[RMDB]
RNA sequence: GGGAACGACUCGAGUAGAGUCGAAAAUAGUCCGGUAAGAUUCCGGAGUCCAUGUUUUAUGGAUAACGCUUAUACUUAUGACGGAGUUACGAGAAGCCGUUGCUUCACUCUGAAAUCAUAAGCGCAACUAUCACUGGACAUUCGUGUCCAGUGAUAGAAAAGAAACAACAACAACAAC
Reactivity to DMS in 0.01 (KOAc 150mM, MgCl2 10mM, bicine 150mM(pH8.5), 24C), signal-to-noise 6, nucleotides 027 to 126: u010a080g000u000c000c000g010g000u000a090a120g000a230u000u010c000c010g000g000a070g010u000c000c010a000u000g000u040u020u040u060a010u000g000g010a020u000a110a150c070g010c050u000u010a040u010a140c100u010u010a010u000g010a240c050g000g010a020g010u000u030a110c170g010a190g000a020a010g020c020c300g000u010u020g000c000u000u000c020a140c020u000c000u000g000a100a120a070u010c130a010u010a000a000g000c070g010c180a100a150
Reactivity to 2A3 in 0.01 (KOAc 150mM, MgCl2 10mM, bicine 150mM(pH8.5), 24C), signal-to-noise 9, nucleotides 027 to 126: u090a010g080u000c010c010g000g000u060a090a060g030a170u120u000c010c000g000g010a010g010u000c000c000a010u030g200u120u210u140u230a020u020g010g000a010u020a080a020c030g010c050u140u080a050u060a180c010u030u030a010u090g020a010c010g010g000a010g020u050u130a110c120g100a070g010a190a010g000c040c110g230u130u300g000c010u010u000c010a000c000u000c010u020g070a180a050a060u050c020a000u000a000a010g020c020g010c040a040a050